[RMDB]
RNA sequence: GGGAACGACUCGAGUAGAGUCGAAAAUUUCGUGUGCCGCAAAUGCGUGGCAGCGAUCUCGAUGCCGGUUUUCUCAUUCUCGAAAAUCUCGGGACGGAAGGCGUGCGAGCGGCUUCCGGCGAGCCGACAUAAUAAAUGGUUUCGACCAUUUAUUAUGAAAAGAAACAACAACAACAAC
Reactivity to 2A3 in 0.01 (KOAc 150mM, MgCl2 10mM, bicine 150mM(pH8.5), 24C), signal-to-noise 9, nucleotides 027 to 126: u030u030u020c020g000u240g120u110g080c010c010g020c040a050a140a210u300g060c110g030u010g000g000c000a000g010c000g010a020u000c030u010c050g060a050u130g060c030c000g020g030u040u020u090u000c040u000c020a100u160u010c030u010c040g080a090a180a200a230u070c070u010c030g010g010g040a030c000g000g040a010a010g050g050c020g000u030g030c030g020a080g030c000g060g030c000u030u010c020c000g030g020c020g020a020g040c000c010g020a020
Reactivity to DMS in 0.01 (KOAc 150mM, MgCl2 10mM, bicine 150mM(pH8.5), 24C), signal-to-noise 9, nucleotides 027 to 126: u000u000u000c010g030u000g010u010g020c000c000g030c020a090a110a100u020g030c230g040u000g010g010c010a210g000c010g000a030u000c060u000c080g010a100u000g010c040c010g010g010u000u000u000u000c010u010c070a150u000u000c030u000c030g000a040a060a110a090u010c120u000c010g010g000g000a100c090g000g000a030a020g000g000c010g030u000g010c280g000a160g000c000g000g000c010u000u000c010c010g000g010c070g000a060g010c030c010g010a140